[RMDB]
RNA sequence: GGGAACGACUCGAGUAGAGUCGAAAAGCCAAAGUGAGAGAGAAGCUGCACGGCAGGUACCCCACGCGCAAGCAGUACGCACAGUCAGGGAAGCGAGAGACUCUCACUGGAAGGGUGGAGAGGUGGGCCCAUGGACUACUUUCGAGUAGUCCAUGGGAAAAGAAACAACAACAACAAC
Reactivity to 2A3 in 0.01 (KOAc 150mM, MgCl2 10mM, bicine 150mM(pH8.5), 24C), signal-to-noise 4, nucleotides 027 to 126: g100c020c020a080a050a030g000u000g000a020g010a000g010a010g010a170a010g000c030u050g020c020a030c070g070g020c040a020g060g050u120a100c000c030c040c040a100c070g000c010g000c010a140a080g000c010a000g030u120a060c080g070c050a030c040a070g050u080c050a050g000g080g020a050a060g020c040g000a020g000a010g020a060c010u010c000u000c010a020c000u010g020g040a060a080g040g030g100u300g070g060a180g000a030g010g050u180g110g020g000
Reactivity to DMS in 0.01 (KOAc 150mM, MgCl2 10mM, bicine 150mM(pH8.5), 24C), signal-to-noise 3, nucleotides 027 to 126: g080c060c010a140a110a060g020u030g000a100g000a050g000a180g040a120a230g000c000u000g020c090a090c080g000g030c010a020g010g010u020a120c010c000c020c050a180c210g000c050g000c110a110a160g000c000a070g010u020a090c110g000c050a110c080a170g020u020c080a100g000g000g000a230a040g000c030g040a210g000a190g010a110c000u010c010u000c040a030c000u010g000g000a170a050g000g000g000u090g010g000a060g020a120g000g000u030g000g010g020
An RNA of 177 nucleotides, treated with 2A3 and DMS and read out base by base. The reactions ran in a buffer of 150 mM KOAc, 10 mM MgCl2 and 150 mM bicine (pH 8.5), at 24 C. 2A3 adducts were read by reverse transcription with SuperScript II with manganese. The 2A3 profile rests on 2,727 reads. For DMS, 2,610 sequencing reads were counted. Reactivities are given for positions 27 through 126.